[RMDB]
This 177-nucleotide RNA was probed chemically with 2A3 and DMS. For DMS the reverse transcriptase was MarathonRT. High DMS reactivity at an A or C suggests that its Watson-Crick edge is free. Values cover nucleotides 27 to 126.

RNA sequence: GGGAACGACUCGAGUAGAGUCGAAAACUUCUUCCCUGCAGUGAGGUCACAAUCCUGUGUUUGUGACAUAGCAGUCAGUUGCCAUGGAGAUGAUUGCUUUAUCACCAACUCCUCUUUGCAAUGACUUCACGUUAGGAAAUUUCGAUUUCCUAACGUGAAAAGAAACAACAACAACAAC
Reactivity to 2A3 in 0.01 (KOAc 150mM, MgCl2 10mM, bicine 150mM(pH8.5), 24C), signal-to-noise 9, nucleotides 027 to 126: c030u090u030c000u030u010c010c000c000u010g010c000a020g010u020g040a010g020g040u100c060a030c040a140a160u180c060c100u200g030u040g010u110u010u020g010u000g000a010c010a030u050a010g000c000a000g000u010c000a040g030u120u180g180c100c050a180u210g140g050a190g020a090u020g010a010u010u010g010c000u030u030u040a080u020c010a010c020c020a020a010c010u020c010c000u010c000u060u100u010g010c020a060a110u080g030a020c000u000u000
Reactivity to DMS in 0.01 (KOAc 150mM, MgCl2 10mM, bicine 150mM(pH8.5), 24C), signal-to-noise 3, nucleotides 027 to 126: c250u020u000c060u010u000c010c000c000u020g020c040a050g010u000g000a050g020g000u000c080a060c110a070a030u030c120c130u010g010u050g010u000u010u010g020u000g000a010c030a050u020a040g000c020a020g000u000c020a030g000u020u010g020c010c110a110u000g000g000a070g020a090u000g000a020u000u000g000c010u000u000u000a070u010c050a060c050c080a040a040c090u000c010c000u000c030u000u010u020g030c020a060a040u020g000a100c160u000u010